[RMDB]
RNA sequence: GGGAACGACUCGAGUAGAGUCGAAAAGCAUGUCUAAUACAAGACUUACGACGUUAUUCAGGGAGAUAAUUAAUAUCCAUAACUACGAAUACUUGUGAAUCAUUAUAAAACUUUAAGAUUAAAGGGUGUAUUAUUGCAAAAGGAUCACGCUUGCAAAAUCACCACUCAGUUUCGACUGAGUGGUGAUAAAAGAAACAACAACAACAAC
Reactivity to 2A3 in 0.01 (KOAc 150mM, MgCl2 10mM, bicine 150mM(pH8.5), 24C), signal-to-noise 2, nucleotides 027 to 156: g030c010a000u040g040u000c080u110a150a030u080a120c080a100a120g010a040c000u020u020a060c070g090a030c030g060u080u120a110u070u060c050a030g000g130g030a100g020a050u090a200a170u120u300a100a100u110a010u140c000c000a050u060a110a030c090u100a060c050g020a060a110u080a060c080u100u050g000u020g120a140a030u020c000a050u120u180a110u060a090a050a050a000c000u080u090u050a070a020g030a080u060u140a080a100a070g030g040g000u040g000u050a040u150u060a070u000u090g010c000a050a060a000a000g010g000a000u050c040a040c090g000c050u020u130g000c000a000a000a000
The data come from the RNA Mapping Database (RMDB), library OK3TST.
Structure probing data (2A3) for a 207-nucleotide construct.
The RNA was probed in 150 mM KOAc, 10 mM MgCl2 and 150 mM bicine (pH 8.5) at 24 C.